About this RNA: Chemical mapping of a 207-nucleotide RNA with 2A3. The RNA was probed in 150 mM KOAc, 10 mM MgCl2 and 150 mM bicine (pH 8.5) at 24 C. For 2A3, 895 sequencing reads were counted. The data come from the RNA Mapping Database (RMDB), library OK3TST.

[RMDB]
RNA sequence: GGGAACGACUCGAGUAGAGUCGAAAAGAUCACUCGAGAUCUCACUCGAGUACUCUCGUUCACGAUCGAGAACUCGUGUGAUCGAGAACGUUCACGAUCACGAGAGUACACGAUCGAUCUCACGUGUUCACGAGAGAGUUCUCACGAUCACACGAACCUGGGGUUUGUAGUUCGCUACAAACCCCAGAAAAGAAACAACAACAACAAC
Reactivity to 2A3 in 0.01 (KOAc 150mM, MgCl2 10mM, bicine 150mM(pH8.5), 24C), signal-to-noise 1, nucleotides 027 to 156: g050a000u050c030a020c030u040c020g000a020g040a260u050c000u000c070a080c100u070c020g000a040g010u020a020c000u000c020u000c010g020u150u220c270a110c300g030a030u020c020g030a000g000a090a010c000u010c120g000u010g000u000g030a010u020c000g000a000g040a150a090c070g000u010u020c020a020c000g000a000u000c020a000c020g020a010g000a000g030u110a000c030a010c000g000a040u100c030g000a060u000c000u010c020a050c030g030u060g060u090u120c100a010c070g010a030g010a000g000a000g050u010u000c010u000c010a000c050g020a020u040c010a000c000a000c030g000a010a000c010